[RMDB]
RNA sequence: GGGAACGACUCGAGUAGAGUCGAAAAGGGGUCACGUUGAUGACCGCUAGAUAGCAUCGAUCGUACUGAAGCCUCCACGGUACGGGAGCUGCUAGCGCAAGACGUGACGGAGGCACCCAAACCCCUAAACAAGUCGUUCGCGACUUGUUUAGGGGAAGUCAAUCUACUGGUUCGCCAGUAGAUUGACAAAAGAAACAACAACAACAAC
Reactivity to 2A3 in 0.01 (KOAc 150mM, MgCl2 10mM, bicine 150mM(pH8.5), 24C), signal-to-noise 4, nucleotides 027 to 156: g060g000g080g020u030c000a000c010g010u000u000g070a300u020g000a020c010c020g000c000u010a030g060a300u160a060g000c010a030u300c060g000a010u000c000g000u000a000c000u010g060a120a020g000c000c000u000c010c000a000c000g010g000u000a000c000g000g000g000a010g000c000u020g010c000u010a000g000c000g000c020a070a060g000a000c000g000u000g000a000c010g000g000a000g000g000c010a040c000c000c010a040a110a170c000c000c010c000u000a000a000a000c000a010a000g000u000c010g050u130u180c280g040c010g150a000c000u000u000g000u000u000u000a000g000g000g000g000a000a010
Structure probing data (2A3) for a 207-nucleotide construct. The 2A3 profile rests on 5,234 reads. The reactions ran in a buffer of 150 mM KOAc, 10 mM MgCl2 and 150 mM bicine (pH 8.5), at 24 C. Source: RMDB library RNAMAK, as collected in RNAgym.